[RMDB]
RNA sequence: GGGAACGACUCGAGUAGAGUCGAAAAUCCUAAGUCUGAGCUACAAGUCUGACCACGUUCUUAUGGGUUGGUUUCUUGUCAGCGUGUCGGAAACGACACGCUUGGAUUUAGAAACCAACCCAUAAGAAUAUCAAGACUUGGUCAGCUCAGAUAUGGACAUUAGCUAUCAGUUCGCUGAUAGCUAAUGAAAAGAAACAACAACAACAAC
Reactivity to DMS in 0.01 (KOAc 150mM, MgCl2 10mM, bicine 150mM(pH8.5), 24C), signal-to-noise 2, nucleotides 027 to 156: u000c010c000u000a100a210g020u000c010u020g010a020g070c000u000a090c000a020a020g020u000c000u010g000a250c150c110a070c090g020u010u000c000u000u000a040u000g000g020g020u010u000g020g030u000u000u000c010u000u000g000u010c010a060g010c000g070u000g000u000c000g020g010a180a170a300c010g010a030c000a010c010g020c000u000u010g030g010a030u000u000u000a010g010a010a020a010c020c000a010a000c010c000c000a010u000a000a010g000a010a010u000a050u010c040a120a030g000a030c010u000u010g000g010u010c080a020g030c010u000c010a000g010a000u010a080u000g000g010a300